RNA sequence: GGGAACGACUCGAGUAGAGUCGAAAACGUCGCGUUGUUUAACGCAGGAGACGAGGGCGACGCCUUUAAAAUAGAUUCGAGCGGUAACUCGCAUUUUUACAAAGAAGUAGACAUAGUAAAAGAAAACGAUGUGUCGUUCGAUACGAUAUUGAUACGGGGAUAAUUACCGAUUCGUCGGUAAUUAUCCAAAAGAAACAACAACAACAAC
Reactivity to DMS in 0.01 (KOAc 150mM, MgCl2 10mM, bicine 150mM(pH8.5), 24C), signal-to-noise 1, nucleotides 027 to 156: c000g020u010c050g040c000g010u000u020g020u000u000u000a040a050c040g030c040a300g010g020a090g000a060c040g000a040g010g000g050c020g230a070c090g020c000c000u020u000u000a070a060a050a080u010a100g010a300u000u000c040g000a040g060c020g000g020u000a040a110c070u010c030g000c060a060u020u000u000u000u000a070c020a100a100a220g000a100a140g000u000a040g010a200c130a070u010a160g020u000a010a060a100a090g000a020a070a090a030c000g030a040u000g040u000g000u010c010g000u000u000c030g000a070u000a100c050g010a130u000a120u000u000g020a180u000a060c090g000g000
Reactivity to 2A3 in 0.01 (KOAc 150mM, MgCl2 10mM, bicine 150mM(pH8.5), 24C), signal-to-noise 3, nucleotides 027 to 156: c040g080u030c040g020c000g030u010u050g110u080u170u240a080a030c050g040c040a090g050g140a070g010a020c030g020a060g020g030g010c020g000a010c020g070c000c010u180u200u110a170a150a050a050u090a040g080a090u050u030c010g010a000g000c000g020g000u040a120a050c000u000c000g000c010a040u020u020u020u000u030a040c060a080a200a000g090a130a030g090u180a030g060a060c030a140u210a010g010u040a000a050a020a000g160a010a150a010a000c000g000a030u170g010u010g000u000c000g000u020u010c000g000a010u020a070c030g010a030u010a070u160u150g070a040u060a160c100g000g000

An RNA of 207 nucleotides, treated with DMS and 2A3 and read out base by base.
Source: RMDB library OK3TST, as collected in RNAgym.
Conditions: 150 mM KOAc, 10 mM MgCl2 and 150 mM bicine (pH 8.5), 24 C.